[RMDB]
RNA sequence: GGGAACGACUCGAGUAGAGUCGAAAAGUGAUUGGACACUGACACUGAGUCAACUAGCCUUGUGCGCGCGGUUCUUCGCGCGCGGAACCGGAGGACGGUCCGAGCCACGAGGGGGGAGGCUCGGACCAUCCAGUUCGAUGUUCGCAUCGAACUGGAUAAAAGAAACAACAACAACAAC
Reactivity to DMS in 0.01 (KOAc 150mM, MgCl2 10mM, bicine 150mM(pH8.5), 24C), signal-to-noise 4, nucleotides 027 to 126: g000u020g000a160u000u010g000g000a100c130a060c030u010g000a100c120a100c060u020g000a110g000u010c080a060a080c070u010a080g000c030c020u000u010g010u020g010c030g010c020g000c010g000g020u040u040c190u030u010c040g010c010g030c020g050c000g000g010a040a090c100c060g020g010a070g010g010a090c060g000g010u000c000c000g010a010g010c010c000a070c100g000a190g030g000g000g020g000g010a090g010g000c000u000c000g020g000a020c010c010
Reactivity to 2A3 in 0.01 (KOAc 150mM, MgCl2 10mM, bicine 150mM(pH8.5), 24C), signal-to-noise 6, nucleotides 027 to 126: g070u070g040a150u130u200g040g010a010c030a010c060u050g030a000c020a010c090u100g060a030g100u050c020a040a060c060u060a030g040c010c000u120u080g130u080g050c000g000c010g000c000g030g040u180u110c080u110u140c030g000c000g000c000g000c000g010g010a030a010c030c010g030g040a040g060g020a050c050g000g000u000c000c000g010a000g000c010c000a060c060g040a180g000g030g010g000g010g000a040g000g000c000u000c010g000g000a000c000c000
Structure probing data (DMS and 2A3) for a 177-nucleotide construct. DMS adducts were read by reverse transcription with MarathonRT. For 2A3, 5,225 sequencing reads were counted. For 2A3 the reverse transcriptase was SuperScript II with manganese. Source: RMDB libraries RFM100 and RFMREP, as collected in RNAgym. The reactions ran in a buffer of 150 mM KOAc, 10 mM MgCl2 and 150 mM bicine (pH 8.5), at 24 C.